[RMDB]
RNA sequence: GGGAACGACUCGAGUAGAGUCGAAAAGAUAUGGAUAUAGGGACAGCAGCUACCCACCUCGGAAACGAGAGGCUGAACUACUGUAACUAUAUCCUAAGUCAAACAAGUUAGGUUCGCCUAACUUGAACUUAGGGUAUGGGUUCGCCCAUACCCUAAGAAAAGAAACAACAACAACAAC
Reactivity to 2A3 in 0.01 (KOAc 150mM, MgCl2 10mM, bicine 150mM(pH8.5), 24C), signal-to-noise 2, nucleotides 027 to 126: g000a030u080a040u110g000g010a010u030a000u010a010g060g000g020a010c000a010g000c000a000g000c000u060a090c130c120c060a210c160c030u000c000g000g020a050a020a000c020g000a020g010a020g100g000c000u000g020a050a010c100u300a030c000u190g020u030a010a020c010u000a000u010a000u000c000c000u000a040a030g010u030c030a070a040a180c000a000a030g020u000u000a020g000g110u020u110c300g100c040c010u000a000a030c020u010u000g050a080a020
Reactivity to DMS in 0.01 (KOAc 150mM, MgCl2 10mM, bicine 150mM(pH8.5), 24C), signal-to-noise 2, nucleotides 027 to 126: g000a040u000a300u010g000g000a020u000a000u000a000g000g000g000a030c000a010g000c000a000g000c020u000a090c130c070c100a290c170c000u000c000g000g000a080a160a100c030g000a010g000a090g000g010c040u010g020a060a090c040u010a160c000u000g000u000a040a030c000u000a020u000a000u000c000c000u010a030a070g000u000c040a130a120a220c020a000a000g020u000u000a000g000g020u000u020c300g010c000c000u000a010a010c000u000u000g000a060a060